[RMDB]
RNA sequence: GGGAACGACUCGAGUAGAGUCGAAAAGGAAGACUAAGUUGCAGUAUGUACUGGCAGUGAAGAUAAGUAUUUAUUCAUUCAUUGAACAUACCUUGAAAUCAACCACUUUUAAUGUGCCAGGGACACAGAAUGAUAUCACCUUCGGGUGAUAUCAUUCAAAAGAAACAACAACAACAAC
Reactivity to DMS in 0.01 (KOAc 150mM, MgCl2 10mM, bicine 150mM(pH8.5), 24C), signal-to-noise 3, nucleotides 027 to 126: g000g000a100a130g000a070c100u010a090a100g000u020u010g020c110a100g010u000a040u000g010u000a120c130u000g020g000c020a040g010u000g010a030a070g020a090u000a010a060g010u010a070u010u000u000a060u000u000c050a120u000u000c070a050u010u010g000a090a050c070a020u000a020c020c110u000u000g010a060a120a100u020c060a050a150c100c060a070c060u000u020u010u000a040a090u000g000u000g020c000c010a060g000g000g000a100c070a050c120a110
Reactivity to 2A3 in 0.01 (KOAc 150mM, MgCl2 10mM, bicine 150mM(pH8.5), 24C), signal-to-noise 2, nucleotides 027 to 126: g030g030a010a040g040a050c070u100a000a170g070u060u090g060c020a010g040u070a030u160g010u020a070c000u060g030g000c010a000g000u000g020a030a020g020a050u050a150a000g050u110a100u140u130u040a070u040u060c060a030u080u030c040a040u000u120g000a050a010c010a020u020a020c020c020u040u050g100a070a050a050u080c040a010a050c030c020a040c020u030u160u010u080a210a100u110g030u030g060c020c010a020g010g020g020a000c020a000c010a020
Conditions: 150 mM KOAc, 10 mM MgCl2 and 150 mM bicine (pH 8.5), 24 C. The record gives the reactivity of an RNA of 177 nucleotides to DMS and 2A3. 2A3 adducts were read by reverse transcription with SuperScript II with manganese. Reactivities are given for positions 27 through 126. For DMS the reverse transcriptase was MarathonRT.